[RMDB]
Chemical mapping of a 177-nucleotide RNA with DMS and 2A3. For DMS the reverse transcriptase was MarathonRT. For 2A3, 3,763 sequencing reads were counted. The DMS profile rests on 2,005 reads. The data come from the RNA Mapping Database (RMDB), library OK2TST. Conditions: 150 mM KOAc, 10 mM MgCl2 and 150 mM bicine (pH 8.5), 24 C.
RNA sequence: GGGAACGACUCGAGUAGAGUCGAAAAAAUGUGGAUCACUGACCCAUCAUUCACGGCAAAGUGUGUGCCGUCCGUGAGGAUUUGUUCCAUGGGAACGGAAAACAUCCGAAGCACGCAUAAAACCGCACGUGAGUGACUAUUUCGAUAGUCACUCACGAAAAGAAACAACAACAACAAC
Reactivity to DMS in 0.01 (KOAc 150mM, MgCl2 10mM, bicine 150mM(pH8.5), 24C), signal-to-noise 3, nucleotides 027 to 126: a020a030u000g040u020g010g010a140u010c010a060c110u000g010a130c020c010c010a080u020c100a050u000u020c080a140c040g000g000c090a050a060a240g020u000g000u000g000u010g020c020c080g010u020c140c030g020u010g010a090g000g000a160u010u000u020g020u000u000c000c000a120u010g030g040g020a040a100c020g000g010a020a010a060a140c160a060u000c010c010g010a200a110g020c030a030c030g020c020a040u000a020a080a150a140c080c030g000c160a120
Reactivity to 2A3 in 0.01 (KOAc 150mM, MgCl2 10mM, bicine 150mM(pH8.5), 24C), signal-to-noise 3, nucleotides 027 to 126: a000a000u210g020u070g050g050a140u140c020a040c120u090g050a060c010c040c000a020u110c030a050u050u120c060a020c020g000g000c020a060a090a130g040u020g000u000g000u000g050c000c020g070u020c020c020g090u110g010a090g030g020a030u100u040u190g090u060u000c050c100a140u110g090g000g050a080a030c000g010g000a010a080a030a100c020a070u000c000c010g010a020a010g000c000a000c020g010c010a000u080a070a080a030a030c030c030g020c050a040